[RMDB]
The record gives the reactivity of an RNA of 207 nucleotides to 2A3 and DMS. The RNA was probed in 150 mM KOAc, 10 mM MgCl2 and 150 mM bicine (pH 8.5) at 24 C. The DMS profile rests on 5,262 reads. The 2A3 profile rests on 6,344 reads. Values cover nucleotides 27 to 156. Source: RMDB library M2RFPK, as collected in RNAgym. DMS adducts were read by reverse transcription with MarathonRT. For 2A3 the reverse transcriptase was SuperScript II with manganese.
RNA sequence: GGGAACGACUCGAGUAGAGUCGAAAAGAUUCCUCGUUGUUGAGCGAGGUUUAAACAAAUCGACCACACAAACGUAGAGCCGACUACGGAUUUAUAAAUUAAGGCAAUAAGUGUGAUAAGGAGACAAAAAACGAUGUUGUGUUCGCACAACAUCGAACAAUCUGAUAAGGUUCGCCUUAUCAGAUUGAAAAGAAACAACAACAACAAC
Reactivity to 2A3 in 0.01 (KOAc 150mM, MgCl2 10mM, bicine 150mM(pH8.5), 24C), signal-to-noise 6, nucleotides 027 to 156: g080a110u190u140c000c000u000c000g000u000u030g010u010u010g000a000g010c010g010a000g000g010u030u110u030a020a030a010c070a000a000a000u010c010g000a010c000c010a010c000a010c000a050a130a020c010g000u000a000g000a020g000c000c010g050a010c000u000a000c000g010g010a020u050u300u030a200u090a080a010a020u100u150a000a000g000g000c000a010a070u200a130a010g000u010g000u000g020a010u040a070a050g140g020a060g030a040c160a050a150a010a020a000a010c010g000a000u000g000u000u000g000u000g020u040u060c170g030c070a000c000a000a000c000a000u000c000g000a020a000
Reactivity to DMS in 0.01 (KOAc 150mM, MgCl2 10mM, bicine 150mM(pH8.5), 24C), signal-to-noise 3, nucleotides 027 to 156: g050a300u010u010c000c000u000c070g040u010u000g030u010u010g000a130g050c030g010a070g010g030u000u010u000a040a110a090c050a070a080a130u000c040g000a100c020c010a050c010a200c010a030a040a120c030g000u010a020g000a240g020c040c040g050a080c020u000a050c020g020g010a240u000u000u000a030u000a050a100a050u010u010a030a090g010g020c060a110a090u000a040a120g020u000g020u010g000a050u010a060a070g000g010a170g010a130c110a000a060a050a050a060a140c030g020a000u000g010u000u000g020u000g010u000u000c300g080c040a020c010a000a010c010a000u020c000g020a000a090